[RMDB]
RNA sequence: GGGAACGACUCGAGUAGAGUCGAAAAAGAUGACGCUACGGCGUCAUCACUCUGAUGAUGACUCCUGUUUUGUGCCACGUGUCUGGGCCACUGAAUGCUCAUGAUGGCAAUGAGGAUCUGAAGAAAAUGCAGCGAUAAUAUUCGUAUUAUCGCUGCAAAAAGAAACAACAACAACAAC
Reactivity to DMS in 0.01 (KOAc 150mM, MgCl2 10mM, bicine 150mM(pH8.5), 24C), signal-to-noise 2, nucleotides 027 to 126: a040g000a000u000g000a010c010g020c000u000a160c240g040g010c030g020u000c000a010u000c000a010c080u020c010u000g010a110u020g040a060u000g010a060c110u000c020c150u010g010u000u000u020u000g020u000g010c000c020a160c180g040u000g010u020c060u000g010g020g020c020c050a110c200u060g010a130a080u030g010c040u000c000a020u000g000a120u000g010g020c000a030a030u010g000a070g000g000a070u000c020u000g000a200a060g010a080a030a080a130
Reactivity to 2A3 in 0.01 (KOAc 150mM, MgCl2 10mM, bicine 150mM(pH8.5), 24C), signal-to-noise 5, nucleotides 027 to 126: a010g010a000u000g000a000c000g010c000u030a010c240g100g010c000g010u010c000a010u000c000a010c000u060c000u010g110a100u020g020a020u030g090a100c050u020c000c060u040g180u170u090u050u180g180u080g020c000c000a040c090g050u080g060u060c080u070g000g020g020c010c020a080c060u190g080a160a110u200g010c000u000c050a040u240g060a120u030g080g000c050a050a040u090g020a010g020g000a020u000c010u030g010a040a010g040a050a080a010a020